[RMDB]
RNA sequence: GGGAACGACUCGAGUAGAGUCGAAAAGGCAGGACUUACCAAGUCUGGGGGCCGAUGAGGGUUGGCUCAAAGUAGGGUUUUGACUUGAAAACUCAAGCUGUGACCCCAAAAAGAUGGAGGUAAAUGAAAAAUCCAUCUGCCUUCGGGCAGAUGGAAACUAGACAUACGGGUUCGCCCGUAUGUCUAGAAAAGAAACAACAACAACAAC
Reactivity to 2A3 in 0.01 (KOAc 150mM, MgCl2 10mM, bicine 150mM(pH8.5), 24C), signal-to-noise 1, nucleotides 027 to 156: g050g000c040a010g040g000a020c020u030u070a110c110c070a030a070g000u010c060u110g000g000g000g030g000c050c100g040a010u070g030a110g010g030g050u050u050g010g020c020u000c060a120a090a030g120u100a110g010g010g030u040u000u050u120g080a120c020u020u010g020a090a060a030a060c060u050c030a020a020g000c020u020g040u140g130a060c000c000c000c020a000a150a000a080a000g040a070u070g020g020a020g080g020u110a040a030a070u180g010a080a200a050a000a000u010c000c000a000u020c000u000g010c000c030u000u020c170g020g000g000c000a000g010a000u010g000g010a010a000a000